Annotation
Chemical mapping of a 177-nucleotide RNA with 2A3 and DMS. Reactivities are rounded to 0.1 and cut off at 0 and 3. For 2A3 the reverse transcriptase was SuperScript II with manganese. The reactions ran in a buffer of 150 mM KOAc, 10 mM MgCl2 and 150 mM bicine (pH 8.5), at 24 C.
RNA sequence: GGGAACGACUCGAGUAGAGUCGAAAAUUCAUUGUGUGCAGCUCGGCCGCCAGCGCAUGGAGGAACAUACCAGAUAGUCAAUCCAACGGGGAAACACAAUGGUUGCUCGUUUUAACUCCAUAACGUAAACAGGUAGGACAUUCGUGUCCUACCUGUUAAAAGAAACAACAACAACAAC
Reactivity to 2A3 in 0.01 (KOAc 150mM, MgCl2 10mM, bicine 150mM(pH8.5), 24C), signal-to-noise 2, nucleotides 027 to 126: u120u120c040a030u070u110g000u030g020u030g140c060a040g020c040u020c070g080g000c000c030g000c000c000a000g040c050g000c030a000u030g050g040a040g050g090a060a040c040a000u140a060c000c020a010g030a150u110a090g010u020c020a010a110u010c000c000a040a080c030g000g030g000g090a040a080a000c050a000c040a020a070u040g020g020u010u030g000c000u000c070g010u050u000u030u120a080a080c020u000c010c030a070u020a170a100c110g110u050a010
Reactivity to DMS in 0.01 (KOAc 150mM, MgCl2 10mM, bicine 150mM(pH8.5), 24C), signal-to-noise 3, nucleotides 027 to 126: u020u040c030a060u030u010g030u020g000u000g000c100a100g030c060u010c050g030g010c010c060g030c010c000a110g060c070g000c130a020u000g040g020a080g000g030a120a090c150a060u000a070c020c110a090g020a200u000a080g000u010c070a100a180u030c090c040a080a180c090g030g020g010g000a070a100a020c060a050c030a080a070u000g000g030u000u000g020c060u000c090g000u000u000u020u010a080a070c070u000c030c030a050u010a060a140c090g000u020a100